[RMDB]
RNA sequence: GGGAACGACUCGAGUAGAGUCGAAAAAAAGAUAUGGAUGACCGGGAGCCAACGCGUGCGUUGAUCACCAAUCGGAAACGAUUGGUGGGAGCACGCAGUUGGCGAAGAACGGUCAUCCUAAGUCAAACAAACGCAGAAAGUUCGCUUUCUGCGUUUGAAAAGAAACAACAACAACAAC
Reactivity to DMS in 0.01 (KOAc 150mM, MgCl2 10mM, bicine 150mM(pH8.5), 24C), signal-to-noise 1, nucleotides 027 to 126: a120a120a070g010a030u020a300u030g000g010a020u000g010a000c000c000g000g000g020a220g030c020c010a000a000c000g010c010g050u000g010c000g000u010u020g000a080u000c000a020c000c030a000a020u010c000g010g010a170a070a150c000g000a020u000u000g000g010u000g000g010g000a030g050c000a010c020g000c000a010g020u000u000g020g000c000g000a080a070g000a180a190c010g000g000u010c010a000u030c000c000u000a010a110g010u000c010a100a130a220